[RMDB]
RNA sequence: GGGAACGACUCGAGUAGAGUCGAAAAUCUGGGUAGCGUAAGUUGAUACCGAAAAGACCUGCGUUUUCAUUAUCAUAUGUAAUAACACCAAUGUUAGUUGUCACGUCACCCAUGACAUCUGUAUGGAGUACCCGCAUUAUUUCGAUAAUGCGGGUACAAAAGAAACAACAACAACAAC
Reactivity to DMS in 0.01 (KOAc 150mM, MgCl2 10mM, bicine 150mM(pH8.5), 24C), signal-to-noise 2, nucleotides 027 to 126: u000c040u000g010g010g020u000a080g010c040g020u000a060a190g000u000u010g010a080u000a070c080c060g000a030a050a050a120g010a090c070c040u010g000c120g010u000u000u000u000c010a090u000u000a040u020c050a050u000a040u000g010u020a070a030u000a040a050c040a100c140c160a060a070u020g000u000u010a060g020u000u000g010u020c100a000c040g010u000c080a020c020c030c040a080u010g000a030c100a060u010c040u000g010u000a170u000g000g020a300
Conditions: 150 mM KOAc, 10 mM MgCl2 and 150 mM bicine (pH 8.5), 24 C. The record gives the reactivity of an RNA of 177 nucleotides to DMS. It was measured as part of the RMDB library OK2TRN. For DMS, 1,862 sequencing reads were counted.